[RMDB]
RNA sequence: GGGAACGACUCGAGUAGAGUCGAAAAGCCGAUCGAUUAGCCGCGAUCGAUAUGCUAGCUAGCUAGCUAUACGCGUAAUUAUAAUUACGUAGCAUUACGCGCGGCUACGGCGCAUGCCGUACGCGUACGAGUGAACUUUGUUCGCAAAGUUCACUCGAAAAGAAACAACAACAACAAC
Reactivity to 2A3 in 0.01 (KOAc 150mM, MgCl2 10mM, bicine 150mM(pH8.5), 24C), signal-to-noise 3, nucleotides 027 to 126: g100c000c010g010a030u020c020g010a020u040u030a000g030c030c010g000c000g020a020u020c000g010a030u080a060u160g010c000u000a010g000c050u050a030g030c020u010a020g000c010u050a050u030a130c090g000c000g000u020a000a050u120u190a150u080a300a130u030u020a010c040g000u020a040g040c040a050u060u110a020c020g010c000g000c000g000g000c010u010a000c000g000g000c050g030c100a120u300g000c000c000g020u030a040c090g000c020g030u050a080
Reactivity to DMS in 0.01 (KOAc 150mM, MgCl2 10mM, bicine 150mM(pH8.5), 24C), signal-to-noise 3, nucleotides 027 to 126: g020c000c010g010a060u000c010g000a040u000u000a060g020c010c020g030c030g000a000u000c000g000a060u010a040u000g010c010u000a010g010c040u010a160g000c030u010a010g010c010u000a080u000a060c160g000c010g000u000a000a030u010u010a150u010a130a110u010u000a010c000g020u000a120g030c200a110u000u000a040c020g010c020g020c010g000g010c010u000a000c000g000g000c010g000c300a070u010g010c000c010g000u000a010c110g010c010g010u000a070
The record gives the reactivity of an RNA of 177 nucleotides to 2A3 and DMS. Reactivities are given for positions 27 through 126. The DMS profile rests on 2,912 reads. The RNA was probed in 150 mM KOAc, 10 mM MgCl2 and 150 mM bicine (pH 8.5) at 24 C. 2A3 adducts were read by reverse transcription with SuperScript II with manganese.